[RMDB]
This 177-nucleotide RNA was probed chemically with 2A3 and DMS.
RNA sequence: GGGAACGACUCGAGUAGAGUCGAAAAGGCUUGAUCCAGAGCUGCAUCGUCGGGUCGCUGAAAUGGCGAUGGAAGAAGAUUUGUCGCUGAAUGCCUUUGUCAAUAAGGCACUGGAAAAAGAAGUCAGUCUAUUGCUAUAUUUCGAUAUAGCAAUAGAAAAAGAAACAACAACAACAAC
Reactivity to 2A3 in 0.01 (KOAc 150mM, MgCl2 10mM, bicine 150mM(pH8.5), 24C), signal-to-noise 7, nucleotides 027 to 126: g020g000c010u010u020g010a010u010c010c010a010g010a000g020c020u020g010c010a020u010c030g070u020c020g110g140g070u020c020g000c020u060g070a160a210a230u300g010g000c010g010a000u050g070g090a080a070g030a030a010g010a030u100u060u150g030u050c020g000c030u030g120a120a030u050g010c000c000u010u010u040g270u200c080a080a120u070a100a010g000g000c010a010c010u010g010g000a010a030a010a040a000g130a030a000g020u010c020a000g050
Reactivity to DMS in 0.01 (KOAc 150mM, MgCl2 10mM, bicine 150mM(pH8.5), 24C), signal-to-noise 9, nucleotides 027 to 126: g010g000c010u000u000g000a170u000c010c010a040g000a060g010c010u000g020c040a040u000c030g010u000c020g010g010g020u000c020g010c020u000g010a100a110a110u010g000g010c000g010a020u000g010g020a100a300g000a060a060g000a050u000u000u000g030u000c280g010c000u000g010a100a120u000g000c000c000u000u000u000g000u010c230a100a090u000a020a020g010g010c000a050c020u000g000g000a020a030a100a110a190g000a090a030g010u010c020a140g010

About this RNA: The RNA was probed in 150 mM KOAc, 10 mM MgCl2 and 150 mM bicine (pH 8.5) at 24 C. For 2A3, 15,663 sequencing reads were counted. Source: RMDB library OK2TST, as collected in RNAgym. For DMS, 25,590 sequencing reads were counted. For DMS the reverse transcriptase was MarathonRT.